An RNA of 177 nucleotides, treated with DMS and read out base by base.
[RMDB]
RNA sequence: GGGAACGACUCGAGUAGAGUCGAAAAGAUAUGGACUCGCGACAUGCUGAUGGGUCGGAAACGACCCUACCAGCAACAGCGACGAGUCCUAAGUCAAAAGGGCAUGCCUCUUCGGAGGCAUGCCCAAGUUCUUUUCUCAGUUCGCUGAGAAAAGAACAAAAGAAACAACAACAACAAC
Reactivity to DMS in 0.01 (KOAc 150mM, MgCl2 10mM, bicine 150mM(pH8.5), 24C), signal-to-noise 1, nucleotides 027 to 126: g010a040u000a300u000g000g000a000c020u000c000g030c000g020a080c110a250u040g000c010u000g020a060u000g010g020g040u000c010g010g000a020a080a090c010g020a000c000c000c010u010a030c010c000a010g030c000a050a040c180a100g020c010g000a120c010g000a010g030u000c000c000u000a050a110g010u000c030a040a100a100a110g030g010g000c010a010u010g000c020c000u000c010u010u010c130g010g000a000g000g000c010a010u000g000c000c000c000a000a000

The RNA was probed in 150 mM KOAc, 10 mM MgCl2 and 150 mM bicine (pH 8.5) at 24 C.